[RMDB]
RNA sequence: GGGAACGACUCGAGUAGAGUCGAAAAGUUAGGCGAGGCUCCUAUACAAACACAGGUUGCUGAUCUGACGACGUCGAGAGACGCCCAAGAUGAGGACAGGAUAUAUCGAACCAAGGUAUAUCCCCAUAAAACUCGGAACACUUCGGUGUUCCGAGAACCUUUACAAAUGCUUCGGCAUUUGUAAAGGAAAAGAAACAACAACAACAAC
Reactivity to 2A3 in 0.01 (KOAc 150mM, MgCl2 10mM, bicine 150mM(pH8.5), 24C), signal-to-noise 3, nucleotides 027 to 156: g010u030u030a040g030g040c090g070a090g040g000c050u000c010c000u100a120u100a190c170a040a220a010c110a010c010a110g070g030u300u140g040c000u010g010a040u000c000u020g010a000c020g010a000c000g020u010c000g010a000g000a010g010a080c000g020c010c020c000a040a050g120a090u170g040a050g040g030a010c040a110g020g000a010u010a000u000a010u010c020g030a070a100c080c080a170a030g000g000u000a000u000a010u030c000c010c020c000a070u240a090a150a010a020c000u000c000g000g000a000a000c000a000c010u000u130c210g020g000u000g000u010u000c000c000g010a000g000a000a000
Reactivity to DMS in 0.01 (KOAc 150mM, MgCl2 10mM, bicine 150mM(pH8.5), 24C), signal-to-noise 2, nucleotides 027 to 156: g010u010u000a060g000g000c040g000a100g000g030c050u010c020c000u000a100u040a250c100a050a080a040c050a080c110a100g040g010u010u010g000c000u000g020a050u010c000u000g010a250c010g030a010c010g030u010c020g000a300g000a300g000a020c000g010c000c020c090a180a040g010a060u010g010a060g000g020a210c020a090g000g010a020u000a000u000a000u010c030g010a130a300c120c180a080a150g000g010u010a010u010a020u000c000c000c020c080a050u010a060a070a090a080c010u000c000g030g000a090a020c000a030c010u000u030c300g030g010u010g010u010u000c000c000g040a000g010a010a020
The record gives the reactivity of an RNA of 207 nucleotides to 2A3 and DMS.
Source: RMDB library M2RFPK, as collected in RNAgym.
For DMS the reverse transcriptase was MarathonRT.
Values are in units of 0.01, from 0 to 300, in steps of 10.
The DMS profile rests on 2,942 reads.